RNA sequence: GGGAACGACUCGAGUAGAGUCGAAAACAGAGGGUGUUAAACCAGCUAAAAAAUUUCUAUAUCUAGUUAUCGAAAAAUUAAUGUCAUGUAUUACAGAUAGCAUUAUUUGUGUUUCAGAUUUCGAUAACACGUUCAGCUGUUUCGACAGCUGAACGUGAAAAGAAACAACAACAACAAC
Reactivity to 2A3 in 0.01 (KOAc 150mM, MgCl2 10mM, bicine 150mM(pH8.5), 24C), signal-to-noise 2, nucleotides 027 to 126: c000a000g140a030g070g000g000u000g040u300u300a140a090a000c030c000a000g070c000u100a000a000a000a000a000a140u090u050u050c210u110a090u000a200u160c040u040a000g000u000u000a090u000c000g060a010a020a020a020a020u060u060a050a050u200g010u260c180a040u030g030u260a240u250u190a040c030a010g060a030u130a090g300c090a230u150u130a010u050u130u050g040u070g090u000u060u090c070a050g010a210u070u000u000c030g000a000u000a030a000

Overview
The record gives the reactivity of an RNA of 177 nucleotides to 2A3. The RNA was probed in 150 mM KOAc, 10 mM MgCl2 and 150 mM bicine (pH 8.5) at 24 C. 2A3 adducts were read by reverse transcription with SuperScript II with manganese.